Conditions: 150 mM KOAc, 10 mM MgCl2 and 150 mM bicine (pH 8.5), 24 C. An RNA of 177 nucleotides, treated with 2A3 and DMS and read out base by base. The data come from the RNA Mapping Database (RMDB), library M2PK90.
RNA sequence: GGGAACGACUCGAGUAGAGUCGAAAAUUAAAGGAGGAGGAGGAGUGUGUGUCUUCCCAGCUGCUGAGUAGAAGCUCCGCACACACGCGAAAGCUACGAGCAGCAGCAGUGCGGAAACGGUGAAAAACAGUAGAAAUGUGUUCGCACAUUUCUACUGAAAAGAAACAACAACAACAAC
Reactivity to 2A3 in 0.01 (KOAc 150mM, MgCl2 10mM, bicine 150mM(pH8.5), 24C), signal-to-noise 2, nucleotides 027 to 126: u110u050a050a020a040g020g020a020g010g030a020g020g020a010g030g000a040g030u070g010u010g010u010g010u040c040u040u000c000c010c000a000g030c000u030g000c000u010g020a020g080u040a030g040a080a000g020c020u010c020c000g020c000a090c000a000c010a020c140g010c010g000a100a070a010g000c010u020a010c070g060a030g020c010a010g000c000a000g010c020a020g120u070g070c050g020g000a020a020a040c050g010g050u100g080a070a060a010a000a030
Reactivity to DMS in 0.01 (KOAc 150mM, MgCl2 10mM, bicine 150mM(pH8.5), 24C), signal-to-noise 5, nucleotides 027 to 126: u010u000a050a100a140g010g010a040g010g010a090g000g010a060g010g000a080g020u010g010u000g020u000g010u000c100u000u000c020c000c020a170g010c010u000g000c000u000g010a060g020u000a130g000a110a050g020c040u000c120c020g010c020a120c200a100c290a100c170g010c020g000a060a090a060g000c000u000a040c060g010a140g020c020a010g010c030a030g010c010a070g000u010g000c090g000g000a030a040a040c090g010g000u010g000a070a050a080a060a130